Annotation:
An RNA of 177 nucleotides, treated with 2A3 and DMS and read out base by base. It was measured as part of the RMDB library TTRDES. The DMS profile rests on 2,209 reads. For 2A3, 5,603 sequencing reads were counted. Values cover nucleotides 27 to 126. The RNA was probed in 150 mM KOAc, 10 mM MgCl2 and 150 mM bicine (pH 8.5) at 24 C. DMS adducts were read by reverse transcription with MarathonRT.
RNA sequence: GGGAACGACUCGAGUAGAGUCGAAAAGAUAUGGAUGCAUUACGGGAGAAGCCAAUCGGAAACGAUUGACUUCAUCGAUCGUACUGUGCAUCCUAAGUCAAAACGUACAGAGUUCGCUCUGUACGAACGUAUGACGACUGUUCGCAGUCGUCAUACGAAAAGAAACAACAACAACAAC
Reactivity to 2A3 in 0.01 (KOAc 150mM, MgCl2 10mM, bicine 150mM(pH8.5), 24C), signal-to-noise 2, nucleotides 027 to 126: g020a010u040a020u110g000g020a000u010g000c000a000u020u080a020c000g060g000g130a230g030a020a020g000c010c000a010a010u020c000g030g000a020a030a010c020g010a000u000u000g010a020c000u000u000c010a100u170c080g100a180u130c010g010u010a040c120u090g040u020g000c000a000u020c010c000u000a010a000g010u000c040a030a000a050a120c030g020u000a000c010a000g010a000g020u070u170c250g060c080u000c010u010g000u010a000c000g000a060a000
Reactivity to DMS in 0.01 (KOAc 150mM, MgCl2 10mM, bicine 150mM(pH8.5), 24C), signal-to-noise 2, nucleotides 027 to 126: g000a030u000a140u000g000g000a000u000g020c000a010u010u000a010c010g050g000g020a230g020a000a010g000c030c000a010a000u000c000g010g020a080a050a070c010g000a010u000u000g000a010c000u020u000c010a200u010c300g000a060u000c010g000u000a000c300u010g020u000g010c020a000u000c000c000u000a010a100g000u000c010a060a080a090a220c040g000u000a010c000a000g000a030g050u010u020c300g030c000u000c000u000g000u000a000c010g010a040a060